[RMDB]
RNA sequence: GGGAACGACUCGAGUAGAGUCGAAAAGAAAAAGGAGGACAUGUCCGCCUGAUUGUGUCCGACCCUGUAGAUACUUCGCUCUGGAAAUUGUGCGGGACAACCCACGCGCGCAGCGAGCCGUAAAAAACUCAUCAGCUAUGUUCGCAUAGCUGAUGAGAAAAGAAACAACAACAACAAC
Reactivity to DMS in 0.01 (KOAc 150mM, MgCl2 10mM, bicine 150mM(pH8.5), 24C), signal-to-noise 2, nucleotides 027 to 126: g010a020a050a070a100a070g010g030a270g000g010a040c000a050u000g000u000c040c190g000c100c110u000g010a060u000u020g040u010g010u000c040c020g000a140c100c010c000u000g000u000a110g020a130u010a040c050u000u000c080g000c000u010c020u000g000g010a120a050a120u000u000g030u000g010c040g030g010g020a120c110a040a080c090c010c010a130c060g010c000g050c020g010c010a090g010c020g000a050g000c010c060g050u040a000a030a050a040a050a090
Reactivity to 2A3 in 0.01 (KOAc 150mM, MgCl2 10mM, bicine 150mM(pH8.5), 24C), signal-to-noise 1, nucleotides 027 to 126: g040a010a190a000a040a020g050g000a020g010g010a000c010a020u040g040u000c070c020g050c060c140u070g060a060u070u270g010u020g020u040c000c000g030a160c050c000c000u050g090u120a050g050a140u060a090c060u020u110c020g020c030u000c060u060g070g050a000a080a140u090u060g020u000g040c000g020g040g010a040c060a030a070c000c060c010a110c020g050c000g000c000g000c050a030g040c050g080a030g010c030c010g020u080a070a060a000a000a000a060